[RMDB]
Structure probing data (2A3 and DMS) for a 177-nucleotide construct.
RNA sequence: GGGAACGACUCGAGUAGAGUCGAAAAGUAGAUGGAAUCCUGUCGAAAGUCGUGAAAACAUCGACAAUCCAGAAGUUAGCCAUCAAUGAUUCCAGAGGAGCAGUCUUUAAGUCAAUAGAGAGGGAUGCACCGCUUUGGUAUUCGUACCAAAGCGGUGAAAAGAAACAACAACAACAAC
Reactivity to 2A3 in 0.01 (KOAc 150mM, MgCl2 10mM, bicine 150mM(pH8.5), 24C), signal-to-noise 4, nucleotides 027 to 126: g050u090a030g000a040u000g010g000a020a010u110c020c030u040g040u060c060g000a010a000a000g000u010c020g010u080g080a120a040a170a060c070a100u120c040g000a010c000a000a030u040c000c000a000g020a100a010g120u070u140a020g030c010c000a020u040c000a020a120u160g020a060u060u050c010c010a020g020a030g070g010a040g030c030a020g070u020c040u040u150u090a100a020g090u070c040a090a120u050a040g080a000g000a050g020g030g010a030u050g010
Reactivity to DMS in 0.01 (KOAc 150mM, MgCl2 10mM, bicine 150mM(pH8.5), 24C), signal-to-noise 3, nucleotides 027 to 126: g000u000a090g000a040u000g010g000a140a170u010c070c020u010g000u070c130g010a020a060a250g020u000c010g020u000g000a100a120a160a130c190a070u040c000g030a010c010a020a300u000c010c030a000g000a110a070g010u030u000a080g010c000c020a010u000c010a110a020u060g010a100u010u020c000c060a150g020a090g030g010a050g020c090a050g020u000c020u030u010u060a050a030g010u000c070a060a060u000a020g000a050g010a070g010g000g020a070u050g010
For DMS, 3,117 sequencing reads were counted. The 2A3 profile rests on 2,267 reads. Values are in units of 0.01, from 0 to 300, in steps of 10.